[RMDB]
RNA sequence: GGGAACGACUCGAGUAGAGUCGAAAACGGCGACAAACAGUACAAAGAGACCGGCGAACCACAGAGCCACGCUCAAGCUAUCACCCCACCCUCUUCAAGUACACGAUGGUGAGUAUCAGCCAAGCUAGAUGAACCAUCUAUUCGUAGAUGGUUCAUCAAAAGAAACAACAACAACAAC
Reactivity to DMS in 0.01 (KOAc 150mM, MgCl2 10mM, bicine 150mM(pH8.5), 24C), signal-to-noise 4, nucleotides 027 to 126: c080g030g010c040g010a080c100a050a060a130c090a080g000u020a070c070a050a120a100g010a110g010a070c090c110g010g000c050g010a070a080c050c040a100c100a060g000a110g000c030c020a040c100g020c020u000c060a060a070g020c040u000a080u010c100a110c070c010c010c030a080c050c050c010u010c030u010u000c120a060a060g030u010a040c080a080c100g010a050u000g030g020u010g000a030g020u010a070u000c050a120g020c000c040a060a050g000c110u000a070
Reactivity to 2A3 in 0.01 (KOAc 150mM, MgCl2 10mM, bicine 150mM(pH8.5), 24C), signal-to-noise 2, nucleotides 027 to 126: c050g020g010c030g040a030c050a050a180a020c020a050g090u150a040c030a020a200a030g060a010g010a050c030c050g050g000c030g030a030a050c050c010a020c050a070g050a010g000c030c060a030c050g000c010u050c020a030a040g000c020u060a040u140c000a110c010c020c000c000a050c060c000c000u040c000u090u070c080a150a050g040u040a030c030a000c050g030a010u050g040g000u010g030a040g000u060a020u140c020a010g060c020c000a020a020g050c030u120a010